[RMDB]
RNA sequence: GGGAACGACUCGAGUAGAGUCGAAAACAGUCAAGGUGAAGGCGGGCCAGACCAUCGCCGCAUUCUACCAGAGCACCGUCAUGAUCUUUGGCACGAUGGCUCGCUACAUCCCAAGAGUUAGGGAAAACAUUUUAGGCGUGUUCGCACGCCUAAAAUGAAAAGAAACAACAACAACAAC
Reactivity to DMS in 0.01 (KOAc 150mM, MgCl2 10mM, bicine 150mM(pH8.5), 24C), signal-to-noise 1, nucleotides 027 to 126: c080a060g050u000c070a080a130g010g020u010g000a130a120g010g000c020g000g010g020c020c040a110g000a150c100c100a050u010c070g020c050c030g010c070a050u010u010c010u010a060c070c050a100g000a070g000c080a050c050c030g000u010c080a030u010g000a050u000c050u000u000u000g020g010c040a100c110g020a130u010g010g000c020u000c040g000c030u010a070c160a110u000c010c010c010a070a160g010a090g020u000u010a070g020g010g010a070a060a070a130
Reactivity to 2A3 in 0.01 (KOAc 150mM, MgCl2 10mM, bicine 150mM(pH8.5), 24C), signal-to-noise 2, nucleotides 027 to 126: c000a020g160u110c050a110a030g060g020u050g100a060a030g000g000c000g030g030g030c040c000a030g010a100c050c020a080u050c060g040c060c010g030c010a030u020u060c040u100a110c000c000a030g020a010g070c040a010c050c020g020u030c050a110u090g070a110u060c040u030u070u060g020g000c030a020c080g100a060u030g000g000c010u020c020g000c010u040a040c020a100u020c010c020c060a040a000g100a010g090u100u160a070g000g010g000a020a070a050a060
Chemical mapping of a 177-nucleotide RNA with DMS and 2A3. The 2A3 profile rests on 1,666 reads. Source: RMDB library OK2TRN, as collected in RNAgym. Reactivities are given for positions 27 through 126. DMS adducts were read by reverse transcription with MarathonRT.